[RMDB]
RNA sequence: GGGAACGACUCGAGUAGAGUCGAAAAAGAAAGAGAUCGCAGCUCCGAAAGAGGACGCGUAGGAUCCGAAAUACUCGAAGCAGCUAACCGGAAAACGGAAGGAUCCAUCCCAAAGCGAUCAAAAAAACUAUAUGUUGAGGUUCGCCUCAACAUAUAGAAAAGAAACAACAACAACAAC
Reactivity to 2A3 in 0.01 (KOAc 150mM, MgCl2 10mM, bicine 150mM(pH8.5), 24C), signal-to-noise 2, nucleotides 027 to 126: a010g090a010a060a000g200a000g000a020u010c010g000c020a010g000c010u000c010c030g160a230a300a040g200a110g000g000a020c100g030c020g020u060a100g000g000a000u000c010c000g020a060a080a020u160a030c040u030c040g140a220a020g020c110a020g000c050u090a050a030c010c000g040g020a150a280a030a120c020g030g000a040a010g010g010a010u000c010c020a040u030c000c000c000a010a040a000g000c020g000a000u000c000a050a050a050a000a000a000a050
Reactivity to DMS in 0.01 (KOAc 150mM, MgCl2 10mM, bicine 150mM(pH8.5), 24C), signal-to-noise 3, nucleotides 027 to 126: a060g010a080a070a090g010a130g000a020u000c020g050c010a160g010c020u010c010c020g000a110a130a140g000a150g000g000a040c150g030c040g030u000a140g000g020a030u000c000c010g010a090a070a120u000a050c040u000c030g020a100a070g020c150a020g000c050u010a070a080c020c000g000g000a050a080a090a100c040g010g010a090a150g010g010a010u000c000c000a300u000c000c020c020a040a040a100g010c000g000a010u020c030a000a000a020a070a020a000a080